[RMDB]
RNA sequence: GGGAACGACUCGAGUAGAGUCGAAAAGUUAUGGAAAACCUCUUAGCUACCACUACAACAACAAUGCUGGACGGUGAUGGUUCGACUUACUCGAAACCAUCACGUAGUGGUAGUCGUUCCCAUUCAACUAUUGUUAGUCCUUCGGGACUAACAAUAGAAAAGAAACAACAACAACAAC
Reactivity to 2A3 in 0.01 (KOAc 150mM, MgCl2 10mM, bicine 150mM(pH8.5), 24C), signal-to-noise 7, nucleotides 027 to 126: g030u050u060a080u240g100g050a060a050a050a120c020c010u050c040u090u110a020g010c010u010a000c000c010a010c000u020a000c010a150a010c000a040a010c020a100a290u230g090c090u110g130g110a090c100g090g010u000g000a000u000g000g020u010u000c010g000a040c080u140u230a090c050u070c020g020a070a050a060c010c000a000u000c000a000c010g000u010a000g000u000g000g010u000a000g000u000c010g010u000u000c000c000c000a000u060u090c030a030a050
Reactivity to DMS in 0.01 (KOAc 150mM, MgCl2 10mM, bicine 150mM(pH8.5), 24C), signal-to-noise 5, nucleotides 027 to 126: g010u000u000a050u010g010g010a080a070a090a100c130c030u000c110u000u000a130g020c000u000a020c010c010a020c000u000a030c010a130a120c130a050a100c180a060a100u010g020c110u000g010g010a110c260g010g020u000g010a020u000g000g000u000u000c010g000a030c220u010u010a070c200u000c000g000a020a020a040c010c000a010u000c000a000c020g000u000a010g000u010g000g010u000a000g010u000c040g010u000u000c000c010c000a140u000u020c100a070a160